[RMDB]
RNA sequence: GGGAACGACUCGAGUAGAGUCGAAAAGACAUGACCUAACUUUAGCAAGUGCAACAUACAUCUGUGGCAAUCCAUGCACUAUUAAUGUAGACAGAGAAAUGGCUCAAGUCCAUCUUCAGACAGAGGGCGUCUAAAACUUGUUCGCAAGUUUUAGACGAAAAGAAACAACAACAACAAC
Reactivity to 2A3 in 0.01 (KOAc 150mM, MgCl2 10mM, bicine 150mM(pH8.5), 24C), signal-to-noise 3, nucleotides 027 to 126: g060a000c040a100u090g030a030c000c020u020a090a110c040u040u120u100a040g020c050a070a040g020u020g040c030a060a060c030a070u180a030c040a070u070c050u120g010u050g050g000c000a000a060u060c040c050a070u070g000c000a010c050u050a070u150u060a140a050u100g020u010a030g020a090c020a010g070a020g040a040a090a030u090g010g000c000u040c110a080a020g020u000c010c020a020u020c050u010u080c050a030g000a090c030a010g050a040g000g020g010
Reactivity to DMS in 0.01 (KOAc 150mM, MgCl2 10mM, bicine 150mM(pH8.5), 24C), signal-to-noise 4, nucleotides 027 to 126: g010a090c080a060u010g000a150c010c020u010a090a070c050u000u000u000a080g000c070a060a070g020u010g020c060a070a080c130a050u010a090c160a070u010c090u020g020u020g020g000c070a140a080u000c110c070a070u010g000c060a130c030u000a070u010u000a070a110u010g000u000a020g010a070c120a050g020a100g010a020a090a030u000g000g000c040u010c120a050a090g020u020c020c040a070u010c030u000u000c080a060g000a060c110a050g030a090g010g000g020
This 177-nucleotide RNA was probed chemically with 2A3 and DMS. 2A3 adducts were read by reverse transcription with SuperScript II with manganese.